[RMDB]
RNA sequence: GGGAACGACUCGAGUAGAGUCGAAAAGAUAUGGAUGUUUGAGCUGCCACUACCCACCUCGGAAACGAGAGGUGGACCCAGCAAGAUGAGACAUCCUAAGUCAAAUCCAGGUCUUCGGACCUGGAAACCAUUUCUGUACCUUCGGGUACAGAAAUGGAAAAGAAACAACAACAACAAC
Reactivity to 2A3 in 0.01 (KOAc 150mM, MgCl2 10mM, bicine 150mM(pH8.5), 24C), signal-to-noise 2, nucleotides 027 to 126: g000a040u070a080u210g020g010a030u030g040u010u040u120g060a000g030c000u040g070c110c100a120c120u200a150c050c010c020a010c010c000u000c000g060g200a290a300a190c130g030a080g010a000g150g000u000g000g020a040c030c040c010a020g000c070a020a120g140a300u300g110a070g000a050c000a010u000c000c010u050a150a020g040u030c060a090a000a040u030c000c000a000g010g000u000c010u100u190c300g100g000a000c000c020u000g030g000a000a000a000
Reactivity to DMS in 0.01 (KOAc 150mM, MgCl2 10mM, bicine 150mM(pH8.5), 24C), signal-to-noise 1, nucleotides 027 to 126: g000a000u000a300u020g000g010a000u000g000u000u010u000g030a150g000c020u000g030c040c150a100c040u000a090c040c010c050a150c040c000u020c010g000g020a150a070a070c180g000a050g010a010g020g000u000g000g020a060c160c180c020a030g000c020a050a220g010a190u020g020a140g000a000c010a000u010c020c030u000a010a050g000u010c070a100a100a110u000c000c000a020g010g000u000c000u000u000c150g050g020a000c000c000u000g000g000a030a050a130
An RNA of 177 nucleotides, treated with 2A3 and DMS and read out base by base. The reactions ran in a buffer of 150 mM KOAc, 10 mM MgCl2 and 150 mM bicine (pH 8.5), at 24 C. For DMS the reverse transcriptase was MarathonRT. For DMS, 763 sequencing reads were counted.